Chemical mapping of a 177-nucleotide RNA with 2A3 and DMS. 2A3 adducts were read by reverse transcription with SuperScript II with manganese. Source: RMDB library RFM100, as collected in RNAgym. Reactivities are given for positions 27 through 126.
[RMDB]
RNA sequence: GGGAACGACUCGAGUAGAGUCGAAAACUGAGAGUGUCCGAGAGGCCUCUCAGUCUCUAAUUAUAGCUAUAUGCUGUAGUUAGAGAUUAAUGCCACGAUUUAUUUAUCCGAAUUAAUAGUAGGAAAAUAUAAUUGAGACGUUCGCGUCUCAAUUAUAAAAAGAAACAACAACAACAAC
Reactivity to 2A3 in 0.01 (KOAc 150mM, MgCl2 10mM, bicine 150mM(pH8.5), 24C), signal-to-noise 4, nucleotides 027 to 126: c010u000g010a000g000a000g000u170g060u070c010c020g060a050g010a090g100g020c000c000u000c000u010c010a000g000u000c000u000c000u000a000a010u010u010a000u020a010g000c010u040a050u030a040u300g000c000u000g000u000a000g010u000u000a000g000a000g000a000u010u180a050a060u110g070c000c010a050c070g030a040u010u210u070a110u070u130u090a110u180c000c000g000a010a020u090u080a150a110u120a110g030u020a010g000g000a030a030a020a000
Reactivity to DMS in 0.01 (KOAc 150mM, MgCl2 10mM, bicine 150mM(pH8.5), 24C), signal-to-noise 2, nucleotides 027 to 126: c020u000g000a010g040a010g010u000g010u030c010c030g010a220g000a200g000g000c020c000u010c010u000c010a000g010u000c000u000c010u010a000a020u000u000a000u000a000g010c000u000a030u010a050u020g060c000u020g020u010a000g050u000u000a000g000a000g000a150u000u020a060a080u020g010c000c010a110c200g000a180u030u060u010a100u050u000u010a080u000c000c000g020a210a300u020u030a170a070u040a110g000u010a090g000g000a030a050a100a070